[RMDB]
RNA sequence: GGGAACGACUCGAGUAGAGUCGAAAAGGGUAUUCCAUUUGCGAAUUAUUGUAUACUCCAUAUCCUAUAUUGGGCGGAGCAAACACUACUUUUCCGGAACUCCCAUCAUAUGUCAACGAAUUUAUGUUUCCAGAAUUUAUAGCUAUGGGACAAUUAGCAAAUGGGAAGAUUUCGAUCUUCCCAUUUGAAAAGAAACAACAACAACAAC
Reactivity to 2A3 in 0.01 (KOAc 150mM, MgCl2 10mM, bicine 150mM(pH8.5), 24C), signal-to-noise 4, nucleotides 027 to 156: g040g000g010u050a030u050u020c020c010a020u090u090u170g060c060g070a070a050u130u010a030u070u100g010u050a060u050a050c010u000c010c010a030u040a090u220c020c030u100a100u020a080u300u170g020g000g040c020g000g010a000g020c060a030a120a000c020a010c030u080a050c010u100u070u040u050c030c030g020g060a020a020c040u010c020c030c000a040u090c020a010u060a020u130g100u070c040a080a070c120g080a100a060u070u120u080a050u100g040u010u040u030c000c000a020g000a100a070u080u200u140a080u210a080g030c030u090a040u120g000g000g040a000c030a050a060u160u060a060g050
Reactivity to DMS in 0.01 (KOAc 150mM, MgCl2 10mM, bicine 150mM(pH8.5), 24C), signal-to-noise 2, nucleotides 027 to 156: g000g010g070u000a070u000u010c030c020a180u000u000u010g010c080g030a090a170u000u000a060u000u010g040u010a120u000a040c010u020c000c010a180u000a110u000c010c000u010a160u000a130u020u000g040g030g060c260g030g030a050g010c030a080a080a070c040a040c080u000a040c060u000u000u010u000c040c050g030g020a070a060c060u000c000c010c020a160u000c050a070u010a080u000g030u000c040a110a160c100g020a050a060u010u000u000a040u030g000u010u000u010c020c010a180g010a080a090u000u000u000a060u000a120g020c060u000a100u000g010g000g000a060c030a060a110u000u000a100g020
Chemical mapping of a 207-nucleotide RNA with 2A3 and DMS. Reactivities are given for positions 27 through 156. For DMS, 3,642 sequencing reads were counted. DMS adducts were read by reverse transcription with MarathonRT. The 2A3 profile rests on 1,566 reads.